[RMDB]
RNA sequence: GGGAACGACUCGAGUAGAGUCGAAAAGCGGACCGCUUCUGCCAGCAGCGAUUGUUUCAUCGCCUGGACCGUGAUACGCUCAUCGACGGCGAAGGCUUCUGCACGGCGCUUCAUGCGGUCAAGCGCCGACGCUGCGGCACUUCGGUGCCGCAGCGUCAAAAGAAACAACAACAACAAC
Reactivity to 2A3 in 0.01 (KOAc 150mM, MgCl2 10mM, bicine 150mM(pH8.5), 24C), signal-to-noise 2, nucleotides 027 to 126: g000c000g000g000a020c050c000g090c000u170u000c050u130g080c010c010a040g000c020a000g020c020g110a100u050u300g080u000u300u080c150a030u100c040g000c000c000u050g070g000a070c010c000g050u030g030a030u060a170c160g010c080u130c120a190u070c010g150a060c000g020g000c040g040a050a000g080g000c100u130u050c010u200g020c060a020c210g040g000c000g000c000u010u020c040a080u020g000c000g000g000u010c000a000a050g000c010g000c000c010